An RNA of 207 nucleotides, treated with DMS and 2A3 and read out base by base.
Values cover nucleotides 27 to 156.
The 2A3 profile rests on 1,278 reads.
The RNA was probed in 150 mM KOAc, 10 mM MgCl2 and 150 mM bicine (pH 8.5) at 24 C.

RNA sequence: GGGAACGACUCGAGUAGAGUCGAAAAUUACUCUUGUUAGGUGAAAGUUGAUGGUCGCUGAGCCAGUCCGUACAUCCAAAAAGGACUCUAUGUAGUAGGAAGUCGAGAGCCUAUGAGAGUUAGAGUCAUGCCUAUUUUGUGUUCGCACAAAAUAGAACUCACUCCAAAAGUUCGCUUUUGGAGUGAGAAAAGAAACAACAACAACAAC
Reactivity to DMS in 0.01 (KOAc 150mM, MgCl2 10mM, bicine 150mM(pH8.5), 24C), signal-to-noise 1, nucleotides 027 to 156: u010u000a080c010u020c020u000u010g000u000u020a050g010g030u010g000a090a060a180g010u000u000g010a100u000g000g020u000c060g000c040u020g010a160g000c000c010a100g000u000c020c050g020u000a120c100a080u000c040c080a050a080a150a110a150g000g010a020c000u000c010u010a040u020g040u010a130g010u000a020g000g010a070a100g000u000c180g010a210g020a300g000c000c010u000a020u000g000a140g030a120g000u000u000a040g020a060g010u010c020a070u010g000c080c000u010a020u000u000u000u000g040u010g010u000u000c300g010c010a010c010a010a010a010a020u000a010g020a070a080
Reactivity to 2A3 in 0.01 (KOAc 150mM, MgCl2 10mM, bicine 150mM(pH8.5), 24C), signal-to-noise 2, nucleotides 027 to 156: u080u040a060c010u040c010u040u090g050u080u120a030g000g010u020g030a160a090a110g060u070u100g050a080u030g030g030u060c120g010c280u150g020a050g020c000c020a030g040u020c000c000g000u020a030c010a110u040c050c050a030a040a070a020a050g090g010a020c000u000c000u030a080u090g050u010a030g030u000a010g030g000a110a010g030u030c060g010a010g020a010g270c010c020u000a030u030g040a050g000a000g100u010u030a010g000a010g000u000c020a030u130g050c020c000u000a000u000u010u000u020g020u010g020u030u030c190g020c120a000c010a000a000a000a000u010a000g000a000a000